RNA sequence: GGGAACGACUCGAGUAGAGUCGAAAACAGUCCUAGGCAUCAUUCCUCCAUCCGAUGUCGAAGCAAUGGCGCAGUCCUAGGCAUCGGCGGUGUCAAAGCAAUGGCGUAGACCUCAGGCACCGAGCAUUACAUGGGUAUUGUUCGCAAUACCCAUGUAAAAAGAAACAACAACAACAAC
Reactivity to 2A3 in 0.01 (KOAc 150mM, MgCl2 10mM, bicine 150mM(pH8.5), 24C), signal-to-noise 2, nucleotides 027 to 126: c020a000g100u100c030c030u030a020g010g010c000a150u030c000a030u150u030c000c020u000c060c010a060u030c000c000g010a030u010g000u000c020g030a020a020g000c000a030a110u300g030g000c250g070c240a060g020u120c000c000u010a010g000g080c000a000u020c000g010g000c020g000g010u000g000u030c050a030a000a000g010c050a010a090u300g000g000c090g100u140a110g070a270c000c010u020c020a000g010g000c000a000c000c060g000a040g020c020a040u030
Reactivity to DMS in 0.01 (KOAc 150mM, MgCl2 10mM, bicine 150mM(pH8.5), 24C), signal-to-noise 3, nucleotides 027 to 126: c130a110g010u000c030c030u010a070g010g010c040a040u000c070a110u000u000c030c010u000c070c100a130u000c020c020g000a000u010g040u000c010g020a130a110g010c090a080a100u000g000g030c040g010c130a080g010u010c020c030u000a190g000g010c000a030u000c010g010g000c050g010g000u000g000u030c010a110a120a130g020c080a060a050u010g010g030c010g030u000a130g000a140c010c000u010c030a040g010g020c010a010c000c000g000a110g010c090a130u000